An RNA of 177 nucleotides, treated with 2A3 and DMS and read out base by base. The data come from the RNA Mapping Database (RMDB), library OK1LIB. Reactivities are rounded to 0.1 and cut off at 0 and 3. High 2A3 reactivity points to a flexible backbone, as in loops and unpaired stretches. Values cover nucleotides 27 to 126. 2A3 adducts were read by reverse transcription with SuperScript II with manganese.
RNA sequence: GGGAACGACUCGAGUAGAGUCGAAAAGAACGAAGCCUGGUUGUUGGCAAGGCAAAGGGCCAAUGUGAGCCUGGAGGAGCUAAGGGUGAUCACUCCCAUCUCGACUUCGACUAAUUUAGCGCAUAGGAGCGAAAUGAGUAUUCGUACUCAUUUCGCUAAAAGAAACAACAACAACAAC
Reactivity to 2A3 in 0.01 (KOAc 150mM, MgCl2 10mM, bicine 150mM(pH8.5), 24C), signal-to-noise 2, nucleotides 027 to 126: g060a050a000c200g110a070a010g080c000c000u010g000g040u050u000g000u040u090g040g070c060a050a000g090g030c000a020a000a180g080g000g000c040c110a120a040u140g080u010g040a030g070c000c000u000g030g070a040g000g050a080g020c010u090a050a060g070g000g020u040g000a020u050c010a030c080u080c010c000c000a010u000c030u020c040g050a020c060u100u070c060g060a050c050u010a000a010u080u100u080a050g060c030g000c030a030u030a190g090g000
Reactivity to DMS in 0.01 (KOAc 150mM, MgCl2 10mM, bicine 150mM(pH8.5), 24C), signal-to-noise 3, nucleotides 027 to 126: g040a060a210c150g000a060a060g020c010c020u000g020g000u000u000g010u030u000g020g010c080a040a110g020g030c050a050a180a070g000g010g000c000c020a040a100u030g020u000g010a080g010c030c000u010g000g010a210g020g020a060g000c020u000a070a050g000g000g000u000g010a090u060c150a150c090u000c030c080c000a080u030c060u010c010g000a090c030u010u000c030g010a090c060u030a080a170u030u010u030a090g000c030g040c050a050u010a160g000g000